[RMDB]
RNA sequence: GGGAACGACUCGAGUAGAGUCGAAAAUAGGGAGCAAACUGUAAUGACGAAACACAACGCGCUAAGCAAGACCACUUUAACAACCUGAUGUCCCGCUUCAUGCCGGCCUACAAGACGGGCGACAAGGCUAUUUGACCGUGUUCGCACGGUCAAAUAGAAAAGAAACAACAACAACAAC
Reactivity to 2A3 in 0.01 (KOAc 150mM, MgCl2 10mM, bicine 150mM(pH8.5), 24C), signal-to-noise 5, nucleotides 027 to 126: u200a020g060g010g000a070g030c050a070a090a100c050u060g020u160a070a140u090g070a070c050g050a060a080a010c090a010c010a080a110c040g030c000g010c050u080a030a040g020c020a040a030g010a050c020c000a030c030u080u110u100a070a040c040a000a050c010c010u030g020a020u070g070u030c000c000c000g020c020u070u070c030a060u070g040c020c000g070g000c000c010u030a040c030a070a000g040a050c050g020g020g010c010g010a020c010a040a020g050g000
Reactivity to DMS in 0.01 (KOAc 150mM, MgCl2 10mM, bicine 150mM(pH8.5), 24C), signal-to-noise 4, nucleotides 027 to 126: u010a090g020g010g010a100g020c010a050a080a090c110u010g010u010a140a050u020g020a090c030g000a080a070a080c150a070c090a020a070c120g020c060g000c050u000a100a120g000c100a080a110g010a140c050c020a040c050u010u020u000a080a030c130a030a110c050c030u000g000a060u020g000u000c000c000c020g010c110u000u000c100a030u040g000c030c000g010g000c010c010u010a070c130a060a040g010a090c080g020g010g000c010g000a030c080a070a040g030g000